[RMDB]
RNA sequence: GGGAACGACUCGAGUAGAGUCGAAAAGAAUUGCAGAUAGAUGACCAGCAAGUUGAUGACAAUGACCAGCGGCACCAACCACAUCAGCCGAUUGUUGGCUUCAAUUUGAUUGCGAAAACUGCCAACAAGGUCCAGAAUGGUUCGCCAUUCUGGACCUAAAAGAAACAACAACAACAAC
Reactivity to DMS in 0.01 (KOAc 150mM, MgCl2 10mM, bicine 150mM(pH8.5), 24C), signal-to-noise 1, nucleotides 027 to 126: g000a050a130u000u010g000c030a030g000a130u000a110g000a050u000g010a300c300c020a000g010c050a010a080g030u010u000g010a050u010g000a100c020a050a000u000g010a110c190c010a020g000c090g000g020c080a060c100c130a040a060c110c020a190c050a070u000c100a040g000c050c010g010a180u000u000g010u000u010g000g010c040u000u000c080a000a040u020u000u000g000a080u080u020g000c150g000a060a140a060a080c110u000g000c030c100a050a020c140a040